[RMDB]
RNA sequence: GGGAACGACUCGAGUAGAGUCGAAAAGAUAUGGAACACUCAUGAAUGAGUCGAAGAACUCGGAAACGAGGGAGACUCACAUGAGGUGUUCCUAAGUCAAACAUCGGGGGGUUCGCCCCCCGAUGAACCAACUCUAAGAGUUCGCUCUUAGAGUUGGAAAAGAAACAACAACAACAAC
Reactivity to 2A3 in 0.01 (KOAc 150mM, MgCl2 10mM, bicine 150mM(pH8.5), 24C), signal-to-noise 1, nucleotides 027 to 126: g010a050u080a030u220g020g020a000a000c000a000c000u000c010a000u070g070a300a290u030g000a120g030u010c040g110a300a110g020a090a040c010u000c010g020g040a040a050a060c020g000a000g010g010g000a070g000a010c000u010c000a000c000a000u000g030a030g000g050u000g000u010u000c000c000u010a010a010g040u010c080a090a080a090c000a020u000c010g030g000g000g040g000g010u030u040c080g110c000c000c000c000c040c000g000a000u000g000a000a010
Reactivity to DMS in 0.01 (KOAc 150mM, MgCl2 10mM, bicine 150mM(pH8.5), 24C), signal-to-noise 2, nucleotides 027 to 126: g000a040u000a300u000g010g000a010a000c000a010c000u000c010a000u000g000a170a150u010g000a020g010u000c000g000a100a160g000a150a210c010u010c000g010g000a130a110a170c000g030a010g010g000g000a130g000a000c000u000c000a020c000a000u000g010a030g030g010u000g010u010u000c000c000u000a030a120g010u000c020a120a100a230c000a000u000c020g010g020g010g040g020g010u010u010c260g000c000c000c000c000c000c000g000a000u000g000a040a160